[RMDB]
Structure probing data (DMS) for a 177-nucleotide construct. Conditions: 150 mM KOAc, 10 mM MgCl2 and 150 mM bicine (pH 8.5), 24 C. The DMS profile rests on 1,179 reads.

RNA sequence: GGGAACGACUCGAGUAGAGUCGAAAAGAUAUGGAUGUGCGAAAAUUCUCCUUGUGAGCGAGGAUCGUACGGUGUCGGAAACGACAUUACGGGAGCUCGCAAGGAGAAUUUUCGCACAUCCUAAGUCGUCUAUUGAAAUGUUCGCAUUUCAAUAGACAAAAGAAACAACAACAACAAC
Reactivity to DMS in 0.01 (KOAc 150mM, MgCl2 10mM, bicine 150mM(pH8.5), 24C), signal-to-noise 1, nucleotides 027 to 126: g010a110u000a300u010g020g000a020u000g010u020g010c020g010a050a000a010a010u000u000c000u000c000c010u020u000g000u000g010a000g010c020g010a100g000g000a050u000c000g000u030a030c300g000g020u000g000u010c000g000g020a130a150a230c000g010a020c010a000u000u020a000c000g000g020g000a070g040c000u010c010g030c010a000a040g000g000a000g030a000a000u000u000u030u000c010g000c000a000c000a000u000c010c000u010a020a080g000u010c080
For DMS the reverse transcriptase was MarathonRT.